[RMDB]
RNA sequence: GGGAACGACUCGAGUAGAGUCGAAAACACAGGCGACUUAAUCGGAGAGCGGUUACACGCGAGGAAGAUGAAAUUAUUACAUCAGUAGACUCCAGAUUACUACAACUUGCGUUGCUAUCUCAAAUAAUCUUUGGUAUCGAUUCGUCGAUACCAAAGAAAAAGAAACAACAACAACAAC
Reactivity to DMS in 0.01 (KOAc 150mM, MgCl2 10mM, bicine 150mM(pH8.5), 24C), signal-to-noise 2, nucleotides 027 to 126: c030a050c090a070g000g000c050g010a080c200u000u000a060a050u000c050g000g010a080g000a150g020c040g010g000u010u030a100c210a150c040g010c000g000a070g020g010a110a050g000a000u000g000a120a080a110u030u000a080u000u020a130c000a010u000c010a120g000u000a100g010a150c070u000c010c040a110g010a030u000u000a050c050u000a030c060a130a040c000u000u010g030c040g010u000u000g000c120u000a110u010c000u010c040a120a070a070u000a080a070
Reactivity to 2A3 in 0.01 (KOAc 150mM, MgCl2 10mM, bicine 150mM(pH8.5), 24C), signal-to-noise 2, nucleotides 027 to 126: c050a010c000a000g060g000c010g020a040c040u080u110a070a030u080c010g040g010a040g020a030g070c040g000g000u050u110a070c080a040c030g000c000g020a020g000g060a030a160g010a040u030g060a020a110a120u260u220a140u050u140a050c000a010u030c000a010g070u060a040g020a050c030u030c050c000a050g030a180u050u020a020c020u040a040c010a050a050c030u000u010g000c000g010u000u040g040c040u040a070u070c010u020c000a040a140a170u260a180a160